[RMDB]
RNA sequence: GGGAACGACUCGAGUAGAGUCGAAAAGAUAUGGAUCAUGGCAAGAGGAGUGGGUCGGAAACGACCCAUGGCCUUGAUGACCCAUGAGUCCUAAGUCAAAAUCCUCGGCACUUCGGUGCCGAGGAAAGACAAGAGAACACUUCGGUGUUCUCUUGUCAAAAGAAACAACAACAACAAC
Reactivity to DMS in 0.01 (KOAc 150mM, MgCl2 10mM, bicine 150mM(pH8.5), 24C), signal-to-noise 1, nucleotides 027 to 126: g000a030u010a230u000g000g010a270u000c020a000u000g000g000c050a010a050g020a000g000g010a300g010u000g000g010g020u020c000g000g000a070a040a140c000g000a000c010c000c010a000u000g010g000c030c000u020u050g050a040u010g020a120c300c000c000a020u000g000a090g010u000c000c010u000a010a070g020u000c050a120a000a200a170u000c000c000u030c000g000g000c000a020c000u000u020c160g050g010u000g000c000c030g000a000g000g000a000a020a140
This 177-nucleotide RNA was probed chemically with DMS.